[RMDB]
RNA sequence: GGGAACGACUCGAGUAGAGUCGAAAAGGCUACUGAGACCUUUGGGGAUGGGAAACAUCUCCAUGAGCAAGGCAUAUAACGUCCUCAACGUGAUUGGGCUCCCAGUACUUCCGAUAGGUAGUCAGGCGGCAUGUCUUGGGGAUGGUUACGGUGGCUACAGUCAUGCUAUCUUCGGAUAGCAUGACUGAAAAGAAACAACAACAACAAC
Reactivity to 2A3 in 0.01 (KOAc 150mM, MgCl2 10mM, bicine 150mM(pH8.5), 24C), signal-to-noise 3, nucleotides 027 to 156: g050g000c010u020a010c000u040g070a030g070a300c010c000u060u040u000g000g000g000g030a000u000g000g090g070a170a200a140c010a010u010c000u000c000c000a030u110g020a030g120c110a030a010g030g000c040a020u050a030u050a170a030c020g010u000c000c000u000c010a040a050c120g060u080g050a170u070u100g050g100g010c010u060c020c000c010a020g050u130a050c050u040u060c000c000g160a180u180a170g010g000u000a000g010u000c040a020g040g040c060g010g010c030a010u030g020u030c040u000u020g000g000g020g000a030u100g080g000u020u010a020c010g000g010u010g000g000c010u040a040
Structure probing data (2A3) for a 207-nucleotide construct. Reactivities are given for positions 27 through 156.